[RMDB]
RNA sequence: GGGAACGACUCGAGUAGAGUCGAAAACUAAUAUGUGUAGAAUCUUCGCUUCACUCAUAUUAGCUCGUAAACAUGGCACUUGUUGUACUACAAGGGACAGAUUUUAUCGCUUGGCAAAUGAGUGUGCCCAAUACAGUACGUUCGCGUACUGUAUUGGAAAAGAAACAACAACAACAAC
Reactivity to 2A3 in 0.01 (KOAc 150mM, MgCl2 10mM, bicine 150mM(pH8.5), 24C), signal-to-noise 4, nucleotides 027 to 126: c010u020a000a030u050a030u070g030u010g030u070a150g030a040a030u040c080u140u130c220g050c100u020u020c010a000c000u000c000a010u020a040u040u020a020g010c020u020c040g110u140a040a040a050c060a130u100g080g000c010a010c000u020u030g020u040u020g070u130a100c060u020a010c030a010a010g000g030g030a000c010a030g160a100u050u130u090u170a070u100c020g000c130u010u060g000g020c030a000a050a110u060g000a000g010u020g000u050g040c000
Reactivity to DMS in 0.01 (KOAc 150mM, MgCl2 10mM, bicine 150mM(pH8.5), 24C), signal-to-noise 4, nucleotides 027 to 126: c010u000a020a020u000a030u010g010u000g000u000a070g030a040a060u000c090u000u000c170g020c290u000u000c010a060c000u000c000a010u000a020u010u000a050g010c040u000c080g010u010a070a080a090c280a100u010g000g010c010a020c010u000u000g020u000u000g020u000a090c210u000a120c020a020a020g000g000g010a020c070a070g000a150u010u010u010u000a070u010c030g010c120u000u000g000g000c060a050a050a030u000g000a040g010u000g000u000g020c070